[RMDB]
RNA sequence: GGGAACGACUCGAGUAGAGUCGAAAACAGGACUAACCCUGCCAGGUCCUAGAAGCUUUCAGAUUCAUCGCAUAGAAUUUGAUACAUACGGCAAAGCACCUUGAAAAUGAAUCAUCUGUAUUUUCUCACCAGUGGGUUAAUUCGUUAACCCACUGGUAAAAGAAACAACAACAACAAC
Reactivity to 2A3 in 0.01 (KOAc 150mM, MgCl2 10mM, bicine 150mM(pH8.5), 24C), signal-to-noise 5, nucleotides 027 to 126: c030a010g010g020a000c020u070a070a100c050c010c000u030g060c020c020a020g040g000u020c000c010u020a040g100a120a010g020c020u020u070u030c020a030g000a040u010u000c000a050u080c090g010c110a080u050a180g040a080a030u040u030u060g050a040u040a060c030a040u090a040c060g010g000c030a040a040a020g040c010a020c010c000u060u090g090a030a060a020a040u110g020a040a050u070c020a030u010c060u030g040u030a110u040u030u010u000c010u000c000
Reactivity to DMS in 0.01 (KOAc 150mM, MgCl2 10mM, bicine 150mM(pH8.5), 24C), signal-to-noise 3, nucleotides 027 to 126: c040a010g000g000a050c050u000a100a140c040c050c000u000g000c020c070a200g000g000u000c020c050u010a160g000a140a150g050c070u000u010u000c000a050g000a040u000u020c010a030u020c140g010c160a120u060a060g000a060a040u050u000u000g030a050u000a080c100a060u000a160c090g000g060c030a030a070a130g000c050a070c020c010u010u000g000a050a140a060a050u000g000a120a010u020c070a080u000c050u000g000u010a060u000u010u000u000c020u000c110